[RMDB]
RNA sequence: GGGAACGACUCGAGUAGAGUCGAAAAGGGGGGCAUCCAGUCGCUAAUUUUCAUAGACUCCUUGGAAAUGCAGCACGCCGUUUUCGGGAAGGACUCGCUGUUUUUUGACACCCAGAACAUGCACACUCACUACCUCGUCCUCAUGAAUAACGGAACCGAAUAAUACUGCUUUCGAGCAGUAUUAUUCAAAAGAAACAACAACAACAAC
Reactivity to 2A3 in 0.01 (KOAc 150mM, MgCl2 10mM, bicine 150mM(pH8.5), 24C), signal-to-noise 5, nucleotides 027 to 156: g030g010g000g000g030g010c000a030u020c010c030a020g050u020c020g000c020u030a030a050u030u050u050u060c040a040u060a100g040a180c050u060c030c000u040u050g020g040a050a060a030u080g050c030a020g010c030a020c070g050c000c010g020u020u020u050u090c040g020g010g040a080a020g030g000a020c010u020c090g000c020u010g090u020u020u000u000u040u080g060a050c030a040c030c030c010a000g030a040a020c030a030u140g020c010a030c000a030c080u080c020a060c020u080a080c010c020u060c050g000u030c010c000u030c010a050u100g070a080a040u150a070a020c020g040g020a020a010c050c000
Reactivity to DMS in 0.01 (KOAc 150mM, MgCl2 10mM, bicine 150mM(pH8.5), 24C), signal-to-noise 2, nucleotides 027 to 156: g010g010g030g040g120g050c040a100u000c040c020a160g000u000c060g000c040u040a060a060u000u030u030u000c080a140u010a140g020a160c060u000c050c030u000u000g010g000a040a080a050u000g010c060a120g020c030a080c070g020c030c030g040u000u010u000u000c070g010g000g010a050a080g030g020a080c030u000c050g020c040u000g020u000u000u000u000u000u000g020a110c060a090c050c000c010a220g010a090a080c070a070u000g000c050a040c050a040c030u000c040a090c080u000a060c030c020u010c070g030u010c020c010u000c000a170u010g010a070a070u010a070a080c030g010g000a080a080c160c130
Annotation: This 207-nucleotide RNA was probed chemically with 2A3 and DMS. For 2A3 the reverse transcriptase was SuperScript II with manganese. Reactivities are given for positions 27 through 156. The data come from the RNA Mapping Database (RMDB), library OK3TST. Conditions: 150 mM KOAc, 10 mM MgCl2 and 150 mM bicine (pH 8.5), 24 C.